An RNA of 170 nucleotides, treated with 2A3 and DMS and read out base by base. Values cover nucleotides 27 to 129.
RNA sequence: GGGAACGACUCGAGUAGAGUCGAAAAUUUGCCUGGGGCUUUUGCGUACAGUCAGAUGAGGCCUCAUGUUCGUUACGACUUGUAUGAUGGUAACAUGUUUAUUAAAUUUCCUGAAGUAGUAUUUGAAACCCACAGCCGUUCGCGGCUGUGAAAAGAAACAACAACAACAAC
Reactivity to 2A3 in 0.01 (KOAc 150mM, MgCl2 10mM, bicine 150mM(pH8.5), 24C), signal-to-noise 2, nucleotides 027 to 129: u000u020u200g040c020c000u000g000g000g060g000c000u040u100u040u140g010c000g000u160a070c050a080g090u000c040a000g070a160u080g020a040g030g010c010c010u010c010a040u080g020u010u070c040g040u030u080a050c010g010a050c080u090u000g050u050a120u030g040a010u030g090g040u000a040a000c050a040u060g000u030u000u000a180u020u080a040a070a030u070u000u050c020c000u000g000a060a000g000u030a000g030u010a050u090u000u050g070a090a010a000c000c000
Reactivity to DMS in 0.01 (KOAc 150mM, MgCl2 10mM, bicine 150mM(pH8.5), 24C), signal-to-noise 2, nucleotides 027 to 129: u010u000u000g020c000c020u000g000g000g000g000c070u010u000u000u000g020c050g010u030a080c040a080g010u020c050a070g020a070u020g040a000g030g050c060c050u040c050a020u030g010u020u010c180g010u020u030a150c090g020a070c000u080u010g000u070a060u030g000a000u030g040g030u030a000a000c060a090u000g020u030u030u000a080u030u010a030a140a060u020u060u040c040c030u020g040a030a120g010u030a020g000u000a060u080u070u000g010a010a010a000c120c030
The reactions ran in a buffer of 150 mM KOAc, 10 mM MgCl2 and 150 mM bicine (pH 8.5), at 24 C. It was measured as part of the RMDB library 15KLIB.